Conditions: 150 mM KOAc, 10 mM MgCl2 and 150 mM bicine (pH 8.5), 24 C. Structure probing data (DMS and 2A3) for a 177-nucleotide construct.
RNA sequence: GGGAACGACUCGAGUAGAGUCGAAAAUACUACAACAAAGCUGACGAAGACUUCAUCAAAGCAACAGAUCAAGCACCAGACUGGGGAGGAAAAUUUGGCAACUUCAUCUUCAGAGCCAAAAAACACACGCGUCAUUAUAAUUCGUUAUAAUGACGCGAAAAGAAACAACAACAACAAC
Reactivity to DMS in 0.01 (KOAc 150mM, MgCl2 10mM, bicine 150mM(pH8.5), 24C), signal-to-noise 2, nucleotides 027 to 126: u000a110c030u020a070c080a060a060c070a110a080a150g020c060u000g020a110c160g000a120a070g010a070c080u020u000c050a020u000c090a080a150a070g000c100a030a040c030a060g020a030u000c060a030a070g020c080a010c020c040a060g030a060c130u000g030g010g010g000a080g000g020a060a040a050a070u000u000u000g010g010c000a090a030c060u020u000c080a050u030c090u010u020c120a070g000a150g030c020c020a000a030a030a070a070a050c110a070c230a140
Reactivity to 2A3 in 0.01 (KOAc 150mM, MgCl2 10mM, bicine 150mM(pH8.5), 24C), signal-to-noise 2, nucleotides 027 to 126: u050a010c020u070a000c000a050a000c010a040a200a030g040c020u050g060a040c070g040a110a050g040a060c010u060u010c070a110u050c020a010a080a100g010c000a000a020c000a020g050a060u030c010a030a040g060c030a030c020c020a020g050a080c020u010g000g010g030g020a040g040g070a000a100a050a030u040u030u050g090g000c010a040a090c050u110u060c040a150u010c020u150u080c030a050g030a030g060c020c000a040a010a000a020a000a020c090a010c020a000